Annotation
Chemical mapping of a 177-nucleotide RNA with 2A3 and DMS. 2A3 adducts were read by reverse transcription with SuperScript II with manganese. DMS adducts were read by reverse transcription with MarathonRT. Conditions: 150 mM KOAc, 10 mM MgCl2 and 150 mM bicine (pH 8.5), 24 C.
[RMDB]
RNA sequence: GGGAACGACUCGAGUAGAGUCGAAAACAAUGCCUAUCGGUAGCAAGCCAUGGAAAAAGAUGUGUCAGCUAGGUAAAGAUGACAAACUGCCCUGUCUGGCAGUCAGCUUCCCAGACAGACUAUAGACCCACAGCCUGUGUUUCGACACAGGCUGUGGAAAAGAAACAACAACAACAAC
Reactivity to 2A3 in 0.01 (KOAc 150mM, MgCl2 10mM, bicine 150mM(pH8.5), 24C), signal-to-noise 1, nucleotides 027 to 126: c020a020a140u150g000c000c000u080a090u230c010g050g040u000a020g070c010a000a060g090c000c000a060u090g040g060a090a050a000a070a050g050a030u090g040u000g080u150c000a000g020c020u040a030g020g060u040a110a050a000g050a080u100g040a010c050a050a070a020c010u010g050c030c010c010u010g030u120c000u020g000g000c010a000g000u000c020a020g010c020u050u000c010c000c010a010g000a010c010a030g000a000c000u040a040u130a200g170a080c000
Reactivity to DMS in 0.01 (KOAc 150mM, MgCl2 10mM, bicine 150mM(pH8.5), 24C), signal-to-noise 1, nucleotides 027 to 126: c210a070a150u000g000c070c010u000a040u000c060g000g020u000a040g000c080a110a110g020c090c020a070u030g010g000a000a140a110a170a120g000a030u000g000u000g000u000c010a100g000c080u000a070g010g010u000a060a120a090g000a100u000g000a030c090a080a100a080c030u000g000c010c050c110u020g030u010c050u010g000g040c070a010g030u000c130a050g000c080u000u020c100c000c040a090g010a090c120a030g000a080c030u010a210u090a120g000a100c080